[RMDB]
RNA sequence: GGGAACGACUCGAGUAGAGUCGAAAACGCAACUGUCCGUGCUGGCUUGCGCGGCCUUUAUCUAUGUCACCGCCGAAAUCCUGCCAGUGGGCGCGCUGUCGGCGAUAGCGCGGAACUUGCGCGUCAGUACUACUUACGAGUUCGCUCGUAAGUAGUAAAAAGAAACAACAACAACAAC
Reactivity to 2A3 in 0.01 (KOAc 150mM, MgCl2 10mM, bicine 150mM(pH8.5), 24C), signal-to-noise 9, nucleotides 027 to 126: c020g020c020a040a050c090u130g050u050c010c000g020u030g010c020u030g030g030c040u120u180g020c030g010c020g060g110c000c010u140u210u100a200u080c110u060a120u140g090u080c030a020c070c020g010c000c000g040a060a060a030u060c010c020u050g040c030c000a050g050u120g020g040g010c010g000c000g000c010u040g040u120c030g050g040c040g110a140u120a090g090c140g000c000g030g010a020a050c020u030u060g000c020g000c000g050u020c020a020g070
Reactivity to DMS in 0.01 (KOAc 150mM, MgCl2 10mM, bicine 150mM(pH8.5), 24C), signal-to-noise 6, nucleotides 027 to 126: c020g010c030a030a050c120u020g000u010c000c000g010u010g000c010u000g010g010c030u000u020g030c050g030c030g000g010c020c010u040u010u030a040u020c110u010a100u020g020u000c050a070c060c020g000c020c000g010a060a100a110u020c030c010u000g000c040c030a100g030u010g020g000g010c020g000c020g010c020u010g010u000c050g010g000c040g010a110u040a030g010c040g010c000g010g000a050a060c150u010u020g020c020g000c070g000u000c060a120g000